[RMDB]
RNA sequence: GGGAACGACUCGAGUAGAGUCGAAAACCUCUCACCACUCAGGUAGUGUUGAAGGUCGCGAGGGAGUCAAGGACGCCCGGCAUCAGAGUGCUGAUUGCACACCACCGGUAUCACGACUAGGUGGGCUGGCUACCACUCCAGGCUGGCAGGUAACGUUGACAUAUAACUUGUUCGCAAGUUAUAUGUCAAAAGAAACAACAACAACAAC
Reactivity to 2A3 in 0.01 (KOAc 150mM, MgCl2 10mM, bicine 150mM(pH8.5), 24C), signal-to-noise 4, nucleotides 027 to 156: c000c000u030c030u030c020a050c070c010a050c010u090c040a080g260g000u180a030g080u050g060u070u030g040a100a050g020g010u090c050g020c040g060a150g000g040g020a030g030u070c080a080a060g060g020a010c070g030c030c020c000g030g000c010a050u100c040a040g110a040g100u060g060c030u090g070a240u130u290g000c010a010c000a030c080c000a000c000c020g000g020u090a080u230c130a060c150g110a050c090u100a230g000g030u020g010g030g000c020u020g020g000c000u050a080c030c040a020c010u000c010c000a010g050g000c030u040g040g000c020a060g050g060u060a070a020c050g050u010u010
Reactivity to DMS in 0.01 (KOAc 150mM, MgCl2 10mM, bicine 150mM(pH8.5), 24C), signal-to-noise 2, nucleotides 027 to 156: c040c030u010c110u030c000a130c100c000a120c040u000c080a190g020g040u010a010g050u000g030u020u000g000a110a110g040g020u000c030g040c080g000a130g000g040g000a060g000u010c070a150a150g000g000a040c050g020c070c060c020g010g010c050a070u000c080a220g020a200g020u040g020c020u020g020a190u000u000g010c070a080c040a150c010c020a020c000c070g030g030u000a110u030c170a110c190g010a110c020u000a050g100g020u000g020g010g050c070u000g030g030c000u000a140c040c010a100c070u010c030c010a140g000g010c050u000g020g040c070a110g050g020u010a030a160c110g040u000u010